RNA sequence: GGGAACGACUCGAGUAGAGUCGAAAAGGGGUCGCUUCAUGUGCUCGCUCGUAGAGCUUGGAUUUAUACAGCUGAAGCCUCCACGGCUGUAUUGUCAGCUCUACGGGCGACCCUGAAGCGACGGAGGCACCCAAAGUUACUACUUCGGUAGUAACAACUAUAGCAAGGUGUUCGCACCUUGCUAUAGAAAAGAAACAACAACAACAAC
Reactivity to 2A3 in 0.01 (KOAc 150mM, MgCl2 10mM, bicine 150mM(pH8.5), 24C), signal-to-noise 1, nucleotides 027 to 156: g090g000g000g000u010c000g030c020u000u000c000a030u050g040u080g020c100u020c020g020c000u000c010g010u000a010g000a010g020c020u070u150g020g000a010u080u300u150a000u030a000c000a000g000c000u010g010a120a020g050c010c000u030c000c030a010c020g000g000c000u010g000u000a000u000u000g010u010c020a040g000c010u000c000u000a020c010g000g000g000c000g000a010c000c010c000u000g000a000a000g010c010g000a000c000g000g000a000g010g030c010a080c000c020c010a040a110a000g000u000u000a000c000u000a000c000u030u160c300g080g000u010a000g000u000a000a000c000a000a010
The record gives the reactivity of an RNA of 207 nucleotides to 2A3. The data come from the RNA Mapping Database (RMDB), library RNAMAK. Conditions: 150 mM KOAc, 10 mM MgCl2 and 150 mM bicine (pH 8.5), 24 C. For 2A3, 1,816 sequencing reads were counted.